An RNA of 177 nucleotides, treated with DMS and 2A3 and read out base by base. Conditions: 150 mM KOAc, 10 mM MgCl2 and 150 mM bicine (pH 8.5), 24 C. Values cover nucleotides 27 to 126. DMS adducts were read by reverse transcription with MarathonRT. For 2A3 the reverse transcriptase was SuperScript II with manganese.
[RMDB]
RNA sequence: GGGAACGACUCGAGUAGAGUCGAAAAACCUCAAAAGAAUAGGCCUGUUGCUUUACAGUGUUAGUGACCCAUUCCCUUUGACGAUUCCUAGGUGGAGAUGGGGCAUGAGGAUCCUCCAGGGGAAAGAGAUGUGCUUACUAUUCGUAGUAAGCACAUCAAAAGAAACAACAACAACAAC
Reactivity to DMS in 0.01 (KOAc 150mM, MgCl2 10mM, bicine 150mM(pH8.5), 24C), signal-to-noise 8, nucleotides 027 to 126: a080c020c010u010c090a050a060a110a110g000a100a080u020a080g000g000c030c010u000g010u000u010g000c130u010u010u010a050c060a040g000u020g000u010u000a100g020u010g010a070c010c010c010a060u000u000c010c010c010u000u010u020g010a130c150g000a170u020u010c020c010u000a060g010g020u010g010g010a040g000a040u010g010g000g000g000c060a040u000g000a050g010g010a130u010c030c020u010c040c030a100g020g010g010g010a050a050a080g000a160
Reactivity to 2A3 in 0.01 (KOAc 150mM, MgCl2 10mM, bicine 150mM(pH8.5), 24C), signal-to-noise 9, nucleotides 027 to 126: a000c030c010u080c030a110a090a020a030g160a060a130u170a120g030g030c010c000u050g020u080u080g060c080u130u140u100a040c020a020g020u040g060u260u150a060g020u040g100a050c010c000c010a020u020u030c010c000c010u030u040u080g110a090c080g070a110u070u090c010c010u040a060g060g040u060g050g100a120g020a060u070g000g010g030g000c010a020u080g020a030g040g020a050u030c000c010u000c020c020a020g000g010g000g050a020a070a000g070a010
Values are in units of 0.01, from 0 to 300, in steps of 10.